[RMDB]
RNA sequence: GGGAACGACUCGAGUAGAGUCGAAAAGUCUCAGCAGAGAUUGCGUGGUGGACGACCGAUGAAAUGGCUGCGGAUAUAAGAAUCUGGUAUGCUAAGAGUGGGGGCAUUUUGAGGAGCAGGAUCAUGGUGAACCUAGCUAUUUCGAUAGCUAGGUUCAAAAAGAAACAACAACAACAAC
Reactivity to 2A3 in 0.01 (KOAc 150mM, MgCl2 10mM, bicine 150mM(pH8.5), 24C), signal-to-noise 4, nucleotides 027 to 126: g030u010c010u000c010a040g010c040a010g030a020g000a100u110u080g080c110g030u040g020g020u080g030g030a020c020g020a020c020c010g060a150u080g030a020a060a080u090g010g000c000u020g010c010g020g010a020u030a030u040a190a120g120a080a050u070c020u080g100g010u110a050u150g070c060u050a030a060g030a010g080u060g010g030g000g000g030c040a020u100u040u050u080g080a070g010g010a050g020c020a000g040g000a020u040c030a050u090g120g010
Reactivity to DMS in 0.01 (KOAc 150mM, MgCl2 10mM, bicine 150mM(pH8.5), 24C), signal-to-noise 5, nucleotides 027 to 126: g010u010c000u000c020a130g010c100a070g000a110g020a070u010u010g030c040g040u010g020g030u000g000g000a050c060g010a100c030c060g000a120u010g000a060a050a090u020g000g000c030u000g020c050g000g010a050u010a080u030a130a100g010a120a070u010c050u000g010g020u020a030u040g000c050u000a040a070g010a070g020u020g020g000g010g000g000c100a060u000u020u010u030g010a110g010g000a070g010c050a070g010g000a110u010c040a050u010g000g020
An RNA of 177 nucleotides, treated with 2A3 and DMS and read out base by base. The reactions ran in a buffer of 150 mM KOAc, 10 mM MgCl2 and 150 mM bicine (pH 8.5), at 24 C. Source: RMDB library OK1LIB, as collected in RNAgym. High 2A3 reactivity points to a flexible backbone, as in loops and unpaired stretches. The 2A3 profile rests on 2,282 reads. Values cover nucleotides 27 to 126.